This 177-nucleotide RNA was probed chemically with DMS and 2A3.
Reactivities are rounded to 0.1 and cut off at 0 and 3.

[RMDB]
RNA sequence: GGGAACGACUCGAGUAGAGUCGAAAAAGAAACCAGAAGGAACAGCCUAUCUGACGGAUACUGGUAUGACUGGCCCAUACGAUGCUAUCCUUGGAAUGGAGAAGGAGGCUGUUAUCCGUCGAUUUAAGUCAUGAUUUUAUUUCGAUAAAAUCAUGACAAAAGAAACAACAACAACAAC
Reactivity to DMS in 0.01 (KOAc 150mM, MgCl2 10mM, bicine 150mM(pH8.5), 24C), signal-to-noise 7, nucleotides 027 to 126: a090g010a100a090a110c030c030a120g020a080a060g000g010a080a070c050a040g010c020c030u000a110u000c020u000g010a070c100g000g000a020u000a020c050u000g000g000u000a010u010g010a120c050u000g000g000c050c040c000a020u000a000c030g000a100u010g010c150u000a050u000c000c000u000u000g010g010a110a150u010g000g000a110g010a090a050g010g000a070g010g000c010u000g000u000u000a050u000c000c010g010u000c020g000a080u000u000u000a060a150
Reactivity to 2A3 in 0.01 (KOAc 150mM, MgCl2 10mM, bicine 150mM(pH8.5), 24C), signal-to-noise 7, nucleotides 027 to 126: a000g060a070a040a010c020c020a030g050a060a050g050g010a030a040c010a020g010c000c020u090a130u090c050u060g020a010c030g000g000a000u010a030c030u100g060g000u010a020u030g050a060c050u060g120g020c000c020c000a010u010a010c020g050a020u070g000c040u050a080u210c010c010u030u050g090g100a140a110u190g100g050a160g030a060a030g070g050a010g010g000c020u020g010u020u010a050u010c010c000g030u020c020g030a030u070u090u190a100a000
It was measured as part of the RMDB library OK2TST.
The 2A3 profile rests on 11,206 reads.